Structure probing data (2A3 and DMS) for a 207-nucleotide construct. 2A3 adducts were read by reverse transcription with SuperScript II with manganese. It was measured as part of the RMDB library M2RFOK.

RNA sequence: GGGAACGACUCGAGUAGAGUCGAAAAGAUUUAAACAGAUGGAGAUACACAAAUGUUUGAAUCCCAGUAACAAAAAUCCUGGUAUCUCGGGUAUACAGUAGUGCAGAUACUGUAUUUUUAAUGCUCAUUAGGUUUUCCAUCUUCGGAUGGAAAACAAGUGACAUAACUGAUUCGUCAGUUAUGUCACAAAAGAAACAACAACAACAAC
Reactivity to 2A3 in 0.01 (KOAc 150mM, MgCl2 10mM, bicine 150mM(pH8.5), 24C), signal-to-noise 3, nucleotides 027 to 156: g010a000u020u000u030a000a010a000c000a020g040a060u030g010g020a010g000a010u010a010c010a000c000a000a100a060u020g000u010u010u000g000a010a010u000c000c000c060a070g160u210a110a090c090a090a160a020a020a040u040c000c000u010g020g000u010a000u030c020u010c000g010g000g010u000a000u000a000c000a000g010u030a000g050u070g280c090a030g040a200u010a020c000u000g010u010a010u000u010u000u020u100a130a120u130g030c040u040c160a110u100u110a030g070g020u000u000u000u000c000c000a000u000c000u020u020c110g080g000a000u010g000g000a000a000a000a040c000a010a020
Reactivity to DMS in 0.01 (KOAc 150mM, MgCl2 10mM, bicine 150mM(pH8.5), 24C), signal-to-noise 1, nucleotides 027 to 156: g000a090u010u000u000a000a010a040c020a070g030a300u000g020g010a090g010a070u000a050c050a160c080a060a090a180u010g010u010u000u000g000a070a060u000c000c030c050a200g020u000a130a180c060a010a060a030a090a070u000c010c010u000g010g030u000a040u000c010u000c020g030g010g030u000a070u000a010c040a020g000u000a030g000u000g050c160a160g010a180u000a000c010u010g000u000a010u000u000u000u000u010a060a080u010g030c060u010c080a090u000u000a090g040g020u010u000u010u000c000c010a000u000c010u010u010c300g020g050a010u000g010g000a010a000a010a000c010a010a080

Overview:
The RNA was probed in 150 mM KOAc, 10 mM MgCl2 and 150 mM bicine (pH 8.5) at 24 C.